RNA sequence: GGGAACGACUCGAGUAGAGUCGAAAACACCCAAGCGGGAGCCAUCGCUCUCCCGGCUGGGCUCGAUAACGGGCAGCAGUGCCAUAGCGGCUGCCACCGCAGCCACCACGGCCGCGGGCACGGCGAAAUACCUAGGGCUAUUCGUAGCCCUAGGUAUAAAAGAAACAACAACAACAAC
Reactivity to 2A3 in 0.01 (KOAc 150mM, MgCl2 10mM, bicine 150mM(pH8.5), 24C), signal-to-noise 2, nucleotides 027 to 126: c040a030c030c010c000a010a000g090c020g040g000g000a000g000c010c020a180u110c060g010c070u000c000u010c010c000c000g120g000c010u050g000g060g000c050u060c040g130a190u110a300a100c080g010g060g000c030a010g000c010a020g050u040g070c080c070a100u080a070g060c030g030g000c010u030g000c030c030a060c010c040g000c010a010g020c000c030a050c100c070a070c080g030g010c000c000g000c000g000g010g000c060a050c040g010g010c020g010a030a130
Reactivity to DMS in 0.01 (KOAc 150mM, MgCl2 10mM, bicine 150mM(pH8.5), 24C), signal-to-noise 3, nucleotides 027 to 126: c120a190c010c000c000a080a050g010c040g000g010g010a020g020c180c070a110u000c140g010c060u010c010u010c010c000c000g000g000c030u010g030g010g000c090u010c050g020a110u000a090a090c160g010g010g030c030a050g000c030a080g020u010g020c010c110a140u020a130g010c020g000g000c020u000g010c040c040a100c070c070g040c020a030g010c010c000a070c180c140a200c120g000g010c000c020g000c010g020g000g000c080a040c080g000g030c020g000a050a080

This 177-nucleotide RNA was probed chemically with 2A3 and DMS. Source: RMDB library OK2TRN, as collected in RNAgym.